[RMDB]
RNA sequence: GGGAACGACUCGAGUAGAGUCGAAAAGGAAGAUGUACUUCUGGAUCCAGGUCUGGGUGUGGCGGGUGGCCAGCAUUCGGUGGUGCGGCAUGGUGAUCGCUUGAAUCGCUACCGGGCCACCCGGGCGCCGUAUCAUUGGCUUCGGCCAAUGAUACGGAAAAGAAACAACAACAACAAC
Reactivity to 2A3 in 0.01 (KOAc 150mM, MgCl2 10mM, bicine 150mM(pH8.5), 24C), signal-to-noise 4, nucleotides 027 to 126: g110g020a060a020g040a080u240g070u280a190c010u000u000c010u040g030g010a010u020c010c030a040g000g120u000c060u120g020g010g020u140g010u080g070g130c040g020g020g000u020g000g030c030c020a060g070c040a070u110u120c010g030g010u020g020g030u030g060c010g040g020c070a090u210g060g000u070g120a130u120c060g020c100u080u300g070a090a040u040c070g020c010u020a020c040c000g020g090g020c010c020a000c000c000c000g000g020g000c040g000
Reactivity to DMS in 0.01 (KOAc 150mM, MgCl2 10mM, bicine 150mM(pH8.5), 24C), signal-to-noise 2, nucleotides 027 to 126: g010g000a010a010g000a290u010g020u040a080c010u000u000c000u000g010g010a180u010c000c030a070g010g000u020c070u000g000g010g010u000g010u020g000g010c010g000g000g050u000g000g010c030c060a120g000c090a100u000u040c040g000g020u010g010g030u010g000c080g010g010c050a070u060g010g010u000g000a060u010c110g000c030u030u030g020a040a030u020c130g010c000u000a020c080c040g000g010g000c020c010a000c010c010c000g000g000g000c050g000
Structure probing data (2A3 and DMS) for a 177-nucleotide construct. For DMS, 5,226 sequencing reads were counted. The reactions ran in a buffer of 150 mM KOAc, 10 mM MgCl2 and 150 mM bicine (pH 8.5), at 24 C. It was measured as part of the RMDB library OK1LIB. For 2A3, 1,539 sequencing reads were counted.